RNA sequence: GGGAACGACUCGAGUAGAGUCGAAAAGGCCGCGUUCUACGUCAAGUGCAUCCACGAUGCUCGACUGAUUGCUCAGCACCAUCCCCUCGGCCUGUUGCUGGCGAACGCUGAGGGCUACCACACGAUGCUCCGAUGGGAGUUUCGACUCCCAUCGGAGAAAAGAAACAACAACAACAAC
Reactivity to 2A3 in 0.01 (KOAc 150mM, MgCl2 10mM, bicine 150mM(pH8.5), 24C), signal-to-noise 1, nucleotides 027 to 126: g000g020c000c000g030c060g040u010u000c070u070a120c050g040u000c050a050a160g050u020g000c000a000u040c050c030a100c230g030a000u030g010c010u020c070g060a100c030u060g030a080u000u160g020c040u040c130a010g010c020a010c020c030a050u030c000c000c030c020u100c030g000g000c020c000u080g070u000u070g020c000u020g000g000c000g020a060a010c010g030c100u000g060a100g060g000g000c000u040a060c060c000a040c010a010c050g000a010u070g000
Reactivity to DMS in 0.01 (KOAc 150mM, MgCl2 10mM, bicine 150mM(pH8.5), 24C), signal-to-noise 2, nucleotides 027 to 126: g000g000c030c030g010c050g000u000u010c030u010a160c280g010u010c050a080a110g000u000g000c040a030u000c000c170a140c170g000a030u010g000c020u000c040g000a050c040u010g010a080u030u030g000c030u000c010a070g030c070a020c080c080a070u000c050c010c010c140u000c070g000g020c000c090u000g010u010u000g010c010u010g000g010c060g000a040a070c090g000c030u010g000a090g000g010g000c080u010a100c040c020a070c140a110c090g000a110u000g000
Structure probing data (2A3 and DMS) for a 177-nucleotide construct. 2A3 adducts were read by reverse transcription with SuperScript II with manganese. Conditions: 150 mM KOAc, 10 mM MgCl2 and 150 mM bicine (pH 8.5), 24 C.